[RMDB]
RNA sequence: GGGAACGACUCGAGUAGAGUCGAAAAGUCGGACCGGUUCGUCGAUAUCCGUCCGGUGACGAUGCGGGACGCGGACGACGUCGUUGCCGCGAUCCGCGGCGAGGUUGCACGGCGCGGCCCGGCCGGCGCCUUGUUCUUGCUUCGGCAAGAACAAGGCAAAAGAAACAACAACAACAAC
Reactivity to DMS in 0.01 (KOAc 150mM, MgCl2 10mM, bicine 150mM(pH8.5), 24C), signal-to-noise 1, nucleotides 027 to 126: g020u000c010g000g020a140c010c010g020g000u010u000c040g030u010c100g010a150u030a070u000c100c020g000u010c050c030g010g020u010g000a110c080g010a090u010g000c010g000g020g010a050c010g000c050g000g000a100c020g000a100c080g020u010c090g010u000u010g000c010c010g000c010g000a070u000c070c020g000c020g000g000c010g000a100g030g020u030u030g040c100a070c050g010g030c030g010c020g000g010c060c020c000g010g010c000c000g000g000c030
Reactivity to 2A3 in 0.01 (KOAc 150mM, MgCl2 10mM, bicine 150mM(pH8.5), 24C), signal-to-noise 2, nucleotides 027 to 126: g010u030c000g060g070a300c010c000g010g000u070u090c050g000u020c060g030a070u040a140u250c080c040g030u030c010c020g030g010u020g010a060c060g050a020u140g060c000g000g000g000a010c030g040c030g010g040a120c030g000a010c020g060u150c090g090u090u060g010c000c020g040c000g040a100u050c060c040g130c000g060g040c020g010a110g050g110u150u140g040c100a040c110g030g010c000g020c010g000g000c000c030c000g020g000c000c000g020g010c030